[RMDB]
Background:
This 207-nucleotide RNA was probed chemically with DMS and 2A3. Values cover nucleotides 27 to 156. The DMS profile rests on 3,552 reads. For 2A3, 1,471 sequencing reads were counted. The reactions ran in a buffer of 150 mM KOAc, 10 mM MgCl2 and 150 mM bicine (pH 8.5), at 24 C. For DMS the reverse transcriptase was MarathonRT.
RNA sequence: GGGAACGACUCGAGUAGAGUCGAAAAUAAAAAAUGUUUUCAUAUGGUACCAAUCCUUCCUCCACUGUUUGCUUUAAUUUUAGUUACCAUAUCAUAGAAGGGUCUAUGUGAUAAAAGAAGGCAAAAGCAGUCUUGAAUAAUCAGACCACUUCUGCCACGAUCUAUUUACUUUCGAGUAAAUAGAUCGAAAAGAAACAACAACAACAAC
Reactivity to DMS in 0.01 (KOAc 150mM, MgCl2 10mM, bicine 150mM(pH8.5), 24C), signal-to-noise 2, nucleotides 027 to 156: u030a030a070a040a070a070a070u000g010u000u000u000u020c030a150u000a070u010g030g000u000a080c040c020a050a100u000c020c010u000u000c020c020u010c080c060a110c090u000g000u000u000u000g050c030u000u000u000a040a110u010u000u010u000a090g020u000u000a050c030c000a110u010a070u000c040a070u010a050g010a070a090g050g010g010u000c000u000a090u050g000u000g010a120u000a050a100a080a130g010a080a080g010g040c000a010a040a040a140g030c020a020g010u000c010u000u000g020a090a160u010a090a150u020c060a070g010a000c010c020a040c020u000u000c000u000g040c020c030a180
Reactivity to 2A3 in 0.01 (KOAc 150mM, MgCl2 10mM, bicine 150mM(pH8.5), 24C), signal-to-noise 2, nucleotides 027 to 156: u150a030a020a010a000a010a010u080g060u050u030u100u100c020a030u070a030u110g010g010u040a060c040c030a040a080u060c020c030u090u000c000c020u060c020c020a050c110u060g030u100u070u100g060c030u100u050u100a130a180u130u210u070u140a040g040u040u020a010c020c000a010u030a020u180c030a020u050a110g010a000a020g040g000g010u010c020u040a080u120g090u060g060a060u070a160a150a000a020g060a040a000g020g000c000a060a080a050a160g040c010a020g020u000c010u020u070g030a110a050u110a070a040u120c040a020g020a010c000c020a150c050u000u000c000u010g050c040c000a040